[RMDB]
RNA sequence: GGGAACGACUCGAGUAGAGUCGAAAAGCAAGUGCCGCUGCAUAUUGCGACAUGAAGGCGAUUGCGAUCUCAUGGCGCAGUUCUUCCUGAAACUUGCGCCGCGCCGCGAUGAUGCGCGGGUGAUUGAGUACUACGACUAUUUCGAUAGUCGUAGUACAAAAGAAACAACAACAACAAC
Reactivity to DMS in 0.01 (KOAc 150mM, MgCl2 10mM, bicine 150mM(pH8.5), 24C), signal-to-noise 9, nucleotides 027 to 126: g010c030a040a080g010u010g020c090c030g020c040u010g000c130a100u010a080u000u010g010c010g010a040c040a070u010g010a100a100g010g010c060g010a170u000u000g020c040g010a090u010c040u000c050a070u000g000g010c000g020c000a020g000u000u000c070u000u010c070c090u000g010a100a060a030c030u000u010g020c000g010c000c000g010c110g010c010c020g010c050g010a140u010g010a110u010g010c000g020c000g000g010g010u000g010a130u000u000g010a300
Reactivity to 2A3 in 0.01 (KOAc 150mM, MgCl2 10mM, bicine 150mM(pH8.5), 24C), signal-to-noise 9, nucleotides 027 to 126: g010c010a020a030g040u040g100c020c020g060c090u120g020c030a030u110a090u190u220g030c030g030a040c060a080u130g100a120a060g040g000c030g060a080u060u230g030c020g030a120u010c020u000c020a050u110g010g000c010g000c010a000g010u030u000c020u100u050c040c060u050g060a080a030a020c050u070u130g000c000g000c010c010g000c010g020c000c010g030c030g050a090u190g040a050u150g070c000g000c000g000g010g030u070g050a180u130u130g030a020
An RNA of 177 nucleotides, treated with DMS and 2A3 and read out base by base. For 2A3 the reverse transcriptase was SuperScript II with manganese. The reactions ran in a buffer of 150 mM KOAc, 10 mM MgCl2 and 150 mM bicine (pH 8.5), at 24 C. DMS adducts were read by reverse transcription with MarathonRT. It was measured as part of the RMDB library OK2TST.